[RMDB]
RNA sequence: GGGAACGACUCGAGUAGAGUCGAAAAGGGACGCCUUUAGAAGAUGAGGCUAGGUGGUAUUCCGGUGUGGGAUACUUGGUAAUAUGUAACGCUAAUUGCAUAAGAUUGUAGGACGGAAUUUACAGUCAAAACGGUCCUGCGUUCGCGCAGGACCGAACGUAUGCUGAUUCUUCGGAAUCAGCAUACGAAAAGAAACAACAACAACAAC
Reactivity to 2A3 in 0.01 (KOAc 150mM, MgCl2 10mM, bicine 150mM(pH8.5), 24C), signal-to-noise 3, nucleotides 027 to 156: g040g000g000a030c070g020c010c040u040u030u100a190g010a200a030g020a060u110g010a010g020g010c010u040a020g000g040u050g040g000u020a030u080u040c050c060g100g070u200g010u130g090g000g020a020u030a070c020u000u090g040g050u060a060a060u040a110u100g050u030a040a000c030g010c190u100a130a060u150u080g020c010a020u020a060a070g030a120u050u070g020u040a020g020g090a030c060g030g020a040a000u100u090u060a070c050a030g000u040c020a010a010a020a110c010g000g000u010c000c010u000g000c000g000u000u060c160g000c000g000c070a000g000g000a000c000c000g000a000a000
Chemical mapping of a 207-nucleotide RNA with 2A3.
The RNA was probed in 150 mM KOAc, 10 mM MgCl2 and 150 mM bicine (pH 8.5) at 24 C.